This 177-nucleotide RNA was probed chemically with 2A3 and DMS.
[RMDB]
RNA sequence: GGGAACGACUCGAGUAGAGUCGAAAAUCAGCACCUUUGUCUUUUUUAACACUAAGAGAGGAAACUUAUAAGCAAGUAGACUUAAAUUAUCUGCCAUGUUUUCUUUAUUUGUAAAAUGGGCUGGUAGAUGUAAGACUAUAUUCGUAUAGUCUUACAUAAAAGAAACAACAACAACAAC
Reactivity to 2A3 in 0.01 (KOAc 150mM, MgCl2 10mM, bicine 150mM(pH8.5), 24C), signal-to-noise 6, nucleotides 027 to 126: u040c000a010g050c030a300c050c000u070u100u110g080u050c050u080u140u120u040u050u160a160a050c040a010c060u070a080a020g040a000g000a000g070g000a020a020a010c040u170u120a110u040a300a020g010c040a050a040g010u020a010g070a070c020u100u170a050a090a140u180u050a040u040c010u020g000c010c010a050u030g010u030u030u020u000c000u020u070u050a130u050u090u050g040u040a010a030a030a060u040g010g010g010c010u010g040g000u020a070g030
Reactivity to DMS in 0.01 (KOAc 150mM, MgCl2 10mM, bicine 150mM(pH8.5), 24C), signal-to-noise 8, nucleotides 027 to 126: u010c030a080g020c050a100c020c010u000u010u010g010u000c000u010u000u000u010u010u020a080a090c080a140c180u000a030a050g000a100g000a030g010g000a020a030a030c020u000u010a090u010a110a160g000c050a030a050g010u000a020g010a100c130u010u010a050a110a130u010u000a030u000c030u000g010c010c050a070u000g000u000u000u000u000c010u000u000u010a110u030u010u000g010u000a020a030a030a030u000g000g000g010c010u000g010g010u000a060g010
Source: RMDB library OK2TST, as collected in RNAgym. For DMS, 11,991 sequencing reads were counted. For DMS the reverse transcriptase was MarathonRT. Reactivities are given for positions 27 through 126. Conditions: 150 mM KOAc, 10 mM MgCl2 and 150 mM bicine (pH 8.5), 24 C. 2A3 adducts were read by reverse transcription with SuperScript II with manganese.